[RMDB]
RNA sequence: GGGAACGACUCGAGUAGAGUCGAAAAGAUAUGGAGUUGGGAUCGAGGAUCUUGCGAUAGACCUACCCACCGAAUUCGGAAACGAAUUCGAGGGUCUAUCGCAAGGGAGAUCAUAACUCCUAAGUCACGAUAGAAUUGACUUCGGUCAAUUCUAUCGAAAAGAAACAACAACAACAAC
Reactivity to DMS in 0.01 (KOAc 150mM, MgCl2 10mM, bicine 150mM(pH8.5), 24C), signal-to-noise 2, nucleotides 027 to 126: g010a110u000a300u040g010g000a020g020u010u000g010g010g000a020u010c000g020a090g000g000a030u010c000u010u000g010c000g010a010u000a000g010a000c000c010u000a080c050c020c050a300c080c000g000a010a000u000u000c010g030g000a160a140a090c010g000a000a000u000u000c000g000a060g000g000g010u000c000u000a000u000c010g010c000a000a000g000g000g000a020g000a000u000c000a090u000a000a000c000u000c010c000u000a020a050g000u000c090a190
Reactivity to 2A3 in 0.01 (KOAc 150mM, MgCl2 10mM, bicine 150mM(pH8.5), 24C), signal-to-noise 1, nucleotides 027 to 126: g080a070u260a180u300g000g000a020g040u030u040g040g050g010a000u000c010g050a300g020g010a010u010c140u010u000g000c000g000a000u000a000g020a020c000c000u080a190c110c010c040a020c020c020g020a010a020u000u000c000g000g030a040a100a110c040g000a020a010u030u010c000g000a010g000g000g000u000c000u000a000u000c000g000c000a000a000g000g000g010a000g020a000u000c000a000u030a000a000c000u050c000c000u070a110a030g180u210c100a020
Chemical mapping of a 177-nucleotide RNA with DMS and 2A3. Conditions: 150 mM KOAc, 10 mM MgCl2 and 150 mM bicine (pH 8.5), 24 C. For DMS, 1,261 sequencing reads were counted. DMS adducts were read by reverse transcription with MarathonRT. The data come from the RNA Mapping Database (RMDB), library TTRINS. For 2A3 the reverse transcriptase was SuperScript II with manganese. Reactivities are given for positions 27 through 126.